[RMDB]
RNA sequence: GGGAACGACUCGAGUAGAGUCGAAAAAGUAUCUCCGGGUCAUAUAUUGUUACUGGCAGCCAGUUGCAGCCCCUCUACCAAGCACUUGGCUUACCCUCCGACCUUGCUGCUCGUGCGAGCCGACUCAUCAACUACCUACGUUCGCGUAGGUAGUUGAAAAAGAAACAACAACAACAAC
Reactivity to DMS in 0.01 (KOAc 150mM, MgCl2 10mM, bicine 150mM(pH8.5), 24C), signal-to-noise 2, nucleotides 027 to 126: a100g020u020a020u000c030u000c010c060g040g020g000u000c060a070u020a160u020a100u000u000g010u000u000a090c020u010g010g000c130a060g000c060c020a060g040u000u000g030c070a090g000c020c050c010c040u000c080u000a070c140c040a060a130g020c050a080c100u010u010g000g020c020u000u000a150c050c000c000u010c030c020g020a030c010c020u000u000g010c110u000g010c030u000c110g070u000g020c080g030a040g000c020c040g010a110c060u000c030a210
Annotation: The record gives the reactivity of an RNA of 177 nucleotides to DMS. Conditions: 150 mM KOAc, 10 mM MgCl2 and 150 mM bicine (pH 8.5), 24 C. It was measured as part of the RMDB library OK2TRN.